Annotation:
Structure probing data (2A3 and DMS) for a 177-nucleotide construct. For 2A3, 725 sequencing reads were counted.
[RMDB]
RNA sequence: GGGAACGACUCGAGUAGAGUCGAAAACGCGCUACGAAUAAUAAUUAUAGUGACAUUUUGAAAAAGUUUUGGAUGAUGUAUUGGCCUAAAUUAGUUAUUCUAAUGGGUAUUAUUAUUCUAAUUGUUAAAUAACCCAAUAUUUCGAUAUUGGGUUAUUAAAAGAAACAACAACAACAAC
Reactivity to 2A3 in 0.01 (KOAc 150mM, MgCl2 10mM, bicine 150mM(pH8.5), 24C), signal-to-noise 2, nucleotides 027 to 126: c080g040c030g040c190u240a030c040g000a010a000u020a040a000u040a010a050u100u200a140u070a210g080u070g080a030c010a010u120u150u030u070g070a020a000a010a050a190g130u120u140u150u070g120g000a050u080g000a000u010g010u070a050u040u180g040g000c000c000u070a080a090a000u010u030a000g010u000u290a140u280u220c000u000a030a030u040g000g000g010u000a010u060u000a000u010u000a010u000u000c000u030a200a000u140u010g020u000u080a080
Reactivity to DMS in 0.01 (KOAc 150mM, MgCl2 10mM, bicine 150mM(pH8.5), 24C), signal-to-noise 2, nucleotides 027 to 126: c050g000c120g010c070u010a070c220g000a050a030u010a040a020u010a010a040u010u020a090u020a070g020u000g020a150c030a010u020u030u070u000g000a160a110a040a080a130g010u010u010u020u010g020g010a070u000g000a020u000g010u010a050u030u020g000g010c000c010u010a040a050a080u010u000a010g000u030u020a070u040u050c010u010a000a010u010g010g000g000u000a020u000u020a020u000u010a020u000u000c000u010a070a160u010u010g010u000u000a070
Conditions: 150 mM KOAc, 10 mM MgCl2 and 150 mM bicine (pH 8.5), 24 C.